[RMDB]
RNA sequence: GGGAACGACUCGAGUAGAGUCGAAAAAGCGCUCUGGAACUCAGCGCCCUAAGCUCAUCAAAGGAAACUCGUGAGACAGGACAAGCGUACGAGUCCUGACGAGAGUGGAAGCGUACGAGCUCGUGAGACAUGUGCUGCGAUUCGUCGCAGCACAUGUAAAAGAAACAACAACAACAAC
Reactivity to DMS in 0.01 (KOAc 150mM, MgCl2 10mM, bicine 150mM(pH8.5), 24C), signal-to-noise 2, nucleotides 027 to 126: a220g030c130g000c020u000c030u000g000g050a010a020c030u010c010a200g010c000g010c020c000c050u020a290a100g000c010u000c010a090u000c060a050a300a070g010g020a040a080a060c000u000c070g030u000g040a120g000a170c090a050g060g000a120c120a110a180g010c080g020u000a030c020g000a040g000u000c000c000u000g010a230c230g010a040g000a070g010u000g010g000a280a240g000c000g000u000a050c080g000a040g010c010u000c050g010u000g020a070g000

An RNA of 177 nucleotides, treated with DMS and read out base by base. The reactions ran in a buffer of 150 mM KOAc, 10 mM MgCl2 and 150 mM bicine (pH 8.5), at 24 C.